[RMDB]
RNA sequence: GGGAACGACUCGAGUAGAGUCGAAAAAUAGGGGCGAAAGACUAAUCGAACCAUCUAGUAGCUGGUUCCCUCCGAAAUUUCCCUCAGGAUAGCAGCAACUUAUUUACGAUAGUUUUAUGAGGUAAAGGUCAAACGGCAAAUUCGUUUGCCGUUUGACAAAAGAAACAACAACAACAAC
Reactivity to 2A3 in 0.01 (KOAc 150mM, MgCl2 10mM, bicine 150mM(pH8.5), 24C), signal-to-noise 2, nucleotides 027 to 126: a000u140a060g000g000g000g000c020g020a070a000a000g040a030c090u120a210a050u040c000g030a120a040c060c000a020u070c000u010a060g120u040a000g050c000u020g050g060u090u030c000c000c000u080c000c000g050a090a090a120u050u050u070c010c040c000u030c020a000g000g060a020u000a110g070c010a010g040c000a000a000c020u060u130a100u220u130u030a030c060g040a090u070a090g090u000u000u000u000a160u090g050a020g080g000u120a010a020a170g110
Reactivity to DMS in 0.01 (KOAc 150mM, MgCl2 10mM, bicine 150mM(pH8.5), 24C), signal-to-noise 1, nucleotides 027 to 126: a060u040a000g000g000g000g020c180g020a150a040a060g000a090c220u010a120a030u000c110g030a140a070c070c110a000u040c060u000a030g030u000a080g000c130u000g030g010u000u000c000c050c010u020c000c000g000a040a020a120u000u000u000c060c010c000u000c020a070g000g000a070u000a040g000c040a070g000c030a060a000c060u000u000a170u040u010u100a040c140g010a140u040a020g000u000u020u000u010a010u020g000a170g000g060u020a000a030a110g010